[RMDB]
Structure probing data (DMS and 2A3) for a 177-nucleotide construct. Conditions: 150 mM KOAc, 10 mM MgCl2 and 150 mM bicine (pH 8.5), 24 C.
RNA sequence: GGGAACGACUCGAGUAGAGUCGAAAAAUGGAUAUCAACGCGCUGAGGAAAGACACAUAUGGAUUCAGAGAGUUCGGCGCCGGAAGUGUCAUGACCAACAUGUGUCACGCCACUGGUGCUGGUGUGACACCCGCGAAAAUUUCGAUUUUCGCGGGUGAAAAGAAACAACAACAACAAC
Reactivity to DMS in 0.01 (KOAc 150mM, MgCl2 10mM, bicine 150mM(pH8.5), 24C), signal-to-noise 9, nucleotides 027 to 126: a090u010g010g010a050u010a040u000c030a140a250c260g010c030g020c020u000g010a060g010g010a080a090a090g000a100c170a060c140a100u010a120u000g010g010a130u010u010c060a080g010a150g000a140g010u000u000c020g010g010c020g010c020c020g000g000a080a080g010u000g000u000c020a060u000g000a190c030c020a080a100c240a090u010g010u000g010u000c000a010c010g010c000c000a030c050u000g010g020u000g020c180u000g010g020u000g010u000g000a060
Reactivity to 2A3 in 0.01 (KOAc 150mM, MgCl2 10mM, bicine 150mM(pH8.5), 24C), signal-to-noise 6, nucleotides 027 to 126: a000u160g030g010a020u040a020u110c020a040a010c030g010c000g000c020u020g020a020g000g100a160a070a020g090a020c020a000c020a090u220a110u300g100g030a070u120u120c060a050g080a010g010a010g200u070u050c020g010g010c020g000c020c010g030g030a070a040g030u020g010u040c010a030u050g060a050c010c020a020a080c040a120u170g060u030g010u080c030a000c010g000c000c010a020c040u120g140g060u150g060c130u000g010g010u010g000u000g020a000

For DMS, 13,864 sequencing reads were counted.